[RMDB]
RNA sequence: GGGAACGACUCGAGUAGAGUCGAAAAUGCAUGUCGUGCCUGAAUGAUGCACGUAAAUCUUUAUUUCAAUUUGUUAUAGUUGCAAACGACGAUAACUACGCUCUAGCGGCUUAAUCCCGCUAGCGCAGACUGGGACCGUUGUUCGUGGCACCCAGCUCCUGUGUAGAAACUUCGGUUUCUACACAGGAAAAGAAACAACAACAACAAC
Reactivity to 2A3 in 0.01 (KOAc 150mM, MgCl2 10mM, bicine 150mM(pH8.5), 24C), signal-to-noise 2, nucleotides 027 to 156: u210g020c050a050u080g070u240c010g000u000g010c000c010u020g050a060a040u040g000a000u170g010c010a000c000g020u050a010a000a000u020c020u000u090u080a030u000u020u000c040a050a110u110u040u210g000u040u050a080u070a140g010u010u080g060c080a060a060a040c040g050a010c030g040a040u010a060a020c060u080a060c110g000c000u000c000u000a000g000c000g040g020c030u150u240a100a100u210c000c010c000g000c010u000a000g030c020g000c000a000g050a030c010u000g000g000g000a010c030c070g070u070u070g040u050u100c080g010u110g030g020c030a080c000c000c010a000g010c010u020